[RMDB]
RNA sequence: GGGAACGACUCGAGUAGAGUCGAAAAGAUAUGGACACGCUAUAGACAGUACAUCAAUCGGAAACGAUUGAGUGUACCGAAGCGGUCCUAAGUCAAACCAAGAGUUGGGUUCGCCCAACUCUUGGAACACAAGAUAACUCUUCGGAGUUAUCUUGUGAAAAGAAACAACAACAACAAC
Reactivity to 2A3 in 0.01 (KOAc 150mM, MgCl2 10mM, bicine 150mM(pH8.5), 24C), signal-to-noise 5, nucleotides 027 to 126: g010a010u050a030u110g020g000a100c150a190c300g000c020u040a030u120a300g110a130c150a090g030u000a000c000a020u030c000a010a010u010c010g050g000a080a040a050c000g020a000u000u020g030a040g080u030g000u010a030c000c010g050a030a000g000c000g020g010u000c000c000u000a070a010g050u010c040a090a070a100c000c000a000a000g010a000g000u000u010g040g030g020u070u100c300g140c010c010c010a000a000c000u000c000u000u000g000g000a010a010
Reactivity to DMS in 0.01 (KOAc 150mM, MgCl2 10mM, bicine 150mM(pH8.5), 24C), signal-to-noise 6, nucleotides 027 to 126: g010a020u000a300u000g000g000a010c000a100c010g020c000u010a180u010a170g010a210c300a110g000u000a010c000a050u010c000a010a000u000c000g000g000a080a060a160c000g010a000u000u010g010a030g010u000g000u000a000c000c020g000a110a050g010c000g000g000u000c010c010u000a010a080g010u000c020a110a120a220c000c000a010a010g000a010g000u000u000g010g010g020u010u010c260g020c010c000c010a000a000c000u000c000u000u000g000g000a040a140
Chemical mapping of a 177-nucleotide RNA with 2A3 and DMS. For DMS, 6,835 sequencing reads were counted. DMS adducts were read by reverse transcription with MarathonRT. The RNA was probed in 150 mM KOAc, 10 mM MgCl2 and 150 mM bicine (pH 8.5) at 24 C.